An RNA of 177 nucleotides, treated with 2A3 and DMS and read out base by base.
RNA sequence: GGGAACGACUCGAGUAGAGUCGAAAAAUAACUGCCUUCCUAACGAAUCGAGUCUUUCAAGUUAAAGUAGGCGAUUCAUUGUCUAGCUUCAAAAGAGCAGAUUGUGGAGUCCCGCAAGGGGCUGUCACAUUUAUGGACUGUUCGCAGUCCAUAAAUGAAAAGAAACAACAACAACAAC
Reactivity to 2A3 in 0.01 (KOAc 150mM, MgCl2 10mM, bicine 150mM(pH8.5), 24C), signal-to-noise 5, nucleotides 027 to 126: a000u110a030a030c040u110g060c010c020u020u030c010c010u020a100a050c070g010a010a010u030c010g010a030g110u000c020u030u080u040c120a260a080g030u110u140a070a020a020g030u040a050g070g060c010g010a010u010u020c020a040u030u070g010u020c020u030a080g010c020u050u040c060a080a070a060a030g030a010g030c010a010g040a080u080u090g040u020g050g030a010g000u000c020c000c010g030c020a040a070g010g010g000g000c020u010g060u080c000a010
Reactivity to DMS in 0.01 (KOAc 150mM, MgCl2 10mM, bicine 150mM(pH8.5), 24C), signal-to-noise 7, nucleotides 027 to 126: a070u010a080a100c100u010g010c070c060u000u000c010c010u000a070a080c130g000a040a030u000c010g010a080g010u000c010u000u000u000c060a120a130g010u010u010a020a030a040g010u000a120g010g000c010g000a030u000u000c020a100u010u010g010u000c030u000a100g020c030u000u000c040a080a060a120a300g000a030g010c010a030g010a060u010u010g020u010g010g000a030g010u000c000c010c000g000c300a060a090g010g010g010g010c010u000g010u000c020a050

It was measured as part of the RMDB library OK2TST.